[RMDB]
RNA sequence: GGGAACGACUCGAGUAGAGUCGAAAAGAUAUGGACGAUGUGUAGGGAGCGUACAUGUCGGAAACGACAUUAACGCGAGGAUCUACCAUCGUCCUAAGUCAAAAGCGCAUCCGUUCGCGGAUGCGCACUUGCGGUAAAAGUUCGCUUUUACCGCAAGAAAAGAAACAACAACAACAAC
Reactivity to 2A3 in 0.01 (KOAc 150mM, MgCl2 10mM, bicine 150mM(pH8.5), 24C), signal-to-noise 3, nucleotides 027 to 126: g020a010u040a010u090g000g000a000c010g020a010u010g300u070g010u100a010g060g030g120a300g050c020g000u010a040c030a130u000g010u000c000g010g000a030a030a010c020g010a010c020a010u050u080a150a010c000g040c020g090a240g050g040a140u000c000u010a010c000c020a000u000c000g000u010c000c000u000a000a000g010u000c000a000a000a110a110g000c000g000c000a000u010c020c000g030u090u150c300g000c020g180g010a020u010g000c020g000c010a010
Reactivity to DMS in 0.01 (KOAc 150mM, MgCl2 10mM, bicine 150mM(pH8.5), 24C), signal-to-noise 2, nucleotides 027 to 126: g000a010u000a300u010g000g010a010c000g040a010u000g000u000g030u010a000g010g000g020a070g010c010g010u020a130c300a020u000g010u000c000g000g000a070a050a170c000g000a030c010a000u000u000a210a060c010g020c000g010a070g000g000a090u010c000u000a000c000c000a010u000c010g010u000c000c010u000a000a040g000u010c070a090a030a140a120g010c000g030c000a010u000c000c010g040u020u020c300g010c010g000g020a010u000g010c030g010c000a010